[RMDB]
RNA sequence: GGGAACGACUCGAGUAGAGUCGAAAACGGCGAUGCUUCCCGGCGCGCUGCGCAUCGAAUUGAGGAACUGCGUGUGCGACGGCGGUGCGCAGCUCUACGUGCGGGGCUACAGCGGCGAGCCGGCGAAGCAGUGCCCUGAGUUCGCUCAGGGCACUGCAAAAGAAACAACAACAACAAC
Reactivity to DMS in 0.01 (KOAc 150mM, MgCl2 10mM, bicine 150mM(pH8.5), 24C), signal-to-noise 2, nucleotides 027 to 126: c050g020g030c040g000a250u010g010c030u000u000c020c000c010g000g020c000g020c080g020c000u020g000c060g010c030a010u000c010g000a090a120u000u010g020a290g010g010a130a050c060u000g010c160g060u000g040u000g030c040g010a130c180g000g010c030g010g000u020g000c020g000c000a010g020c000u000c010u010a090c080g010u010g000c000g010g010g040g000c200u030a050c170a140g020c010g000g000c050g010a170g000c010c010g000g010c110g010a030a100
Reactivity to 2A3 in 0.01 (KOAc 150mM, MgCl2 10mM, bicine 150mM(pH8.5), 24C), signal-to-noise 2, nucleotides 027 to 126: c020g010g020c040g080a060u160g000c020u050u020c000c000c000g000g010c020g020c000g020c020u020g030c000g040c020a000u020c020g130a200a210u100u270g070a150g090g090a130a060c050u030g030c080g090u300g090u200g080c070g070a070c050g020g050c000g070g000u030g010c000g000c020a020g020c000u000c010u040a050c010g030u040g300c020g020g000g040g000c030u180a090c040a050g050c000g030g030c010g000a040g000c010c000g030g030c090g020a130a000
Conditions: 150 mM KOAc, 10 mM MgCl2 and 150 mM bicine (pH 8.5), 24 C. This 177-nucleotide RNA was probed chemically with DMS and 2A3. 2A3 adducts were read by reverse transcription with SuperScript II with manganese. The DMS profile rests on 1,385 reads. DMS adducts were read by reverse transcription with MarathonRT. It was measured as part of the RMDB library OK2TRN. Reactivities are given for positions 27 through 126.